[RMDB]
RNA sequence: GGGAACGACUCGAGUAGAGUCGAAAAGUCAGACGAUGGGCUGGCAGGCACAUGCUGACGAGGAGCUCUGAAGACACUGCUUCAAUUCCGAGACUGUGCUCAAAAGAGCGUUCAUGGCCUGUGAAGGGUGGUACAUCGCGUUCGCGCGAUGUACCACAAAAGAAACAACAACAACAAC
Reactivity to 2A3 in 0.01 (KOAc 150mM, MgCl2 10mM, bicine 150mM(pH8.5), 24C), signal-to-noise 1, nucleotides 027 to 126: g040u020c020a000g020a120c090g120a090u130g010g000g130c000u020g070g110c070a090g030g020c030a010c000a150u060g000c030u000g000a030c030g000a010g030g020a000g000c000u010c020u060g060a030a000g000a020c010a040c090u130g040c030u040u040c070a100a300u160u000c050c000g000a000g020a050c050u060g030u060g050c060u010c000a070a190a000a050g020a000g010c010g040u080u030c030a050u050g050g000c000c000u040g010u040g090a080a050g170g030
Reactivity to DMS in 0.01 (KOAc 150mM, MgCl2 10mM, bicine 150mM(pH8.5), 24C), signal-to-noise 1, nucleotides 027 to 126: g000u000c050a010g050a130c130g040a080u010g030g010g040c020u010g020g000c190a020g040g040c020a030c020a000u000g000c100u000g000a030c040g040a090g000g050a120g020c160u020c070u000g000a160a090g000a110c080a020c060u000g010c010u000u000c010a050a200u000u000c080c120g010a090g000a060c000u000g010u000g000c050u000c010a030a080a100a060g000a050g000c020g000u000u020c010a090u000g010g030c010c000u000g000u000g010a150a100g040g010